[RMDB]
RNA sequence: GGGAACGACUCGAGUAGAGUCGAAAAGAAGGGAAAGGAGAACCAUGGACAGUCUCCAGAGGUUCCUAAGGCCUCGGUCGCGCCUGCCGGGAGGCAGAAUGUCCCGGUUGUCCAUGUAAGAAGAAGAAAUACCCAGUAUCUUCGGAUACUGGGUAUUAAAAGAAACAACAACAACAAC
Reactivity to 2A3 in 0.01 (KOAc 150mM, MgCl2 10mM, bicine 150mM(pH8.5), 24C), signal-to-noise 3, nucleotides 027 to 126: g060a020a020g080g010g040a030a060a070g020g000a020g010a050a010c060c000a000u000g000g000a000c000a010g150u040c030u030c070c110a020g010a010g040g040u080u210c000c060u090a060a100g050g010c000c000u010c010g010g000u080c080g000c020g020c090c000u000g000c000c000g000g010g000a010g000g000c040a020g160a180a070u110g010u010c000c000c010g010g020u000u020g000u010c000c000a000u000g020u030a060a080g060a070a010g030a050a040g040a020
Reactivity to DMS in 0.01 (KOAc 150mM, MgCl2 10mM, bicine 150mM(pH8.5), 24C), signal-to-noise 7, nucleotides 027 to 126: g020a100a070g010g000g020a040a080a100g000g000a050g000a070a110c180c020a010u000g000g000a010c020a050g020u020c050u020c020c020a090g010a070g000g010u000u000c060c100u020a120a140g000g000c010c000u020c120g010g010u020c080g000c240g000c020c000u000g010c010c000g000g000g010a040g000g010c040a120g010a100a040u030g000u000c010c000c020g000g000u000u010g000u000c010c010a020u000g000u030a110a090g010a110a110g010a110a100g010a090

Notes: This 177-nucleotide RNA was probed chemically with 2A3 and DMS. The RNA was probed in 150 mM KOAc, 10 mM MgCl2 and 150 mM bicine (pH 8.5) at 24 C. For 2A3, 2,264 sequencing reads were counted. Values cover nucleotides 27 to 126. DMS adducts were read by reverse transcription with MarathonRT.